[RMDB]
RNA sequence: GGGAACGACUCGAGUAGAGUCGAAAAUACGGUUAUCUUGUGUGAGCGGACCUUCUUCCGGGGAGCAAGAAACCCCGAUGACACCAAGCACUUUUCCUUGUGACAUCACCGGCAUAUAGUAACCAAAUCGUACGAUUAGUUUCGACUAAUCGUACGAAAAAGAAACAACAACAACAAC
Reactivity to DMS in 0.01 (KOAc 150mM, MgCl2 10mM, bicine 150mM(pH8.5), 24C), signal-to-noise 3, nucleotides 027 to 126: u000a120c160g010g010u000u000a050u020c020u010u010g020u010g000u000g030a300g010c030g000g000a090c150c130u000u000c040u000u010c080c020g030g010g010g030a210g000c060a060a080g000a110a100a100c020c010c010c040g010a060u000g010a060c110a070c080c050a050a080g010c120a030c140u010u000u010u010c040c000u000u000g010u000g020a100c080a070u000c070a080c050c020g000g000c090a040u000a050u010a070g010u010a060a080c040c050a030a060a100
Reactivity to 2A3 in 0.01 (KOAc 150mM, MgCl2 10mM, bicine 150mM(pH8.5), 24C), signal-to-noise 1, nucleotides 027 to 126: u180a030c050g030g000u060u020a090u110c030u090u070g020u000g010u000g080a040g070c030g000g030a090c020c000u110u080c020u050u010c030c000g020g000g000g000a090g050c060a060a050g110a130a090a060c000c010c000c010g020a050u080g040a020c000a010c070c050a050a010g060c030a040c000u050u070u080u100c020c000u000u060g040u060g050a020c010a030u090c010a010c040c020g050g000c040a010u060a010u050a100g090u080a030a040c010c000a000a080a020